[RMDB]
RNA sequence: GGGAACGACUCGAGUAGAGUCGAAAACUCAAGGCCUUCGGGCCUUGAGAAAAGGCAUCGUAUCUUUGCUUCGAAGCCAAACAUGAAACAUCAAAGCAGAGAAAAGUUUUGGGUUCGCCCAAAACAAGUGUAUAUUGGACUUCGGUCCAAUAUACACAAAAGAAACAACAACAACAAC
Reactivity to DMS in 0.01 (KOAc 150mM, MgCl2 10mM, bicine 150mM(pH8.5), 24C), signal-to-noise 2, nucleotides 027 to 126: c000u010c000a000a000g010g000c000c020u010u020c170g050g010g010c000c010u000u000g000a010g000a010a040a080a140g020g020c000a080u000c070g000u000a090u000c010u000u000u000g010c010u000u010c010g030a060a090g020c010c020a060a110a120c140a130u000g030a090a130a140c100a120u020c030a020a040a060g030c020a040g010a000g010a180a090a090a070g000u000u000u000u010g030g010g050u000u010c210g010c000c000c010a000a000a010a010c010a080a060
Reactivity to 2A3 in 0.01 (KOAc 150mM, MgCl2 10mM, bicine 150mM(pH8.5), 24C), signal-to-noise 3, nucleotides 027 to 126: c000u000c010a020a000g020g000c000c040u140u180c300g060g010g000c010c000u040u000g000a010g000a000a030a000a010g010g000c010a030u030c040g020u070a070u080c010u000u000u030g010c000u010u020c010g010a030a000g000c020c030a060a090a030c060a070u190g140a140a070a070c020a040u160c090a080a030a000g000c010a010g010a000g020a010a080a010a040g020u000u000u000u010g020g000g020u030u070c220g070c020c000c030a000a000a000a000c010a040a050